[RMDB]
This 177-nucleotide RNA was probed chemically with DMS and 2A3. DMS adducts were read by reverse transcription with MarathonRT. The 2A3 profile rests on 4,433 reads. For DMS, 2,708 sequencing reads were counted.
RNA sequence: GGGAACGACUCGAGUAGAGUCGAAAAAAAGAUAUGGACUCUCACGCUUGAUGACCCAUGGAGAACUGUGUGUCGGAAACGACACACUCAGUAUCCAUGGCAAGAGCGCGAGAGUCCUAAGUCAAAAUCAUCGAAAGUAGUUCGCUACUUUCGAUGAAAAAGAAACAACAACAACAAC
Reactivity to DMS in 0.01 (KOAc 150mM, MgCl2 10mM, bicine 150mM(pH8.5), 24C), signal-to-noise 2, nucleotides 027 to 126: a110a120a070g000a030u000a250u000g000g000a020c000u000c000u000c010a000c010g020c000u000u010g010a110u030g000a060c300c000c000a000u000g010g010a030g020a100a180c080u010g000u000g010u000g000u000c000g020g000a030a020a080c000g000a010c030a020c000a000c180u000c140a030g010u010a180u000c000c000a010u000g010g000c030a050a020g000a000g000c000g020c010g010a010g000a010g000u000c000c000u000a000a030g000u000c010a080a070a080a140
Reactivity to 2A3 in 0.01 (KOAc 150mM, MgCl2 10mM, bicine 150mM(pH8.5), 24C), signal-to-noise 1, nucleotides 027 to 126: a000a000a000g030a020u040a010u060g020g010a000c010u000c000u010c010a030c030g040c000u120u070g030a220u060g010a300c000c020c000a000u000g010g000a070g050a300a150c020u050g000u010g000u020g020u050c010g000g000a020a000a030c000g010a020c000a000c000a000c010u000c000a010g000u000a000u000c000c000a010u000g020g000c000a100a040g000a000g010c010g020c010g000a000g010a000g000u010c010c010u000a010a000g000u000c000a010a020a020a150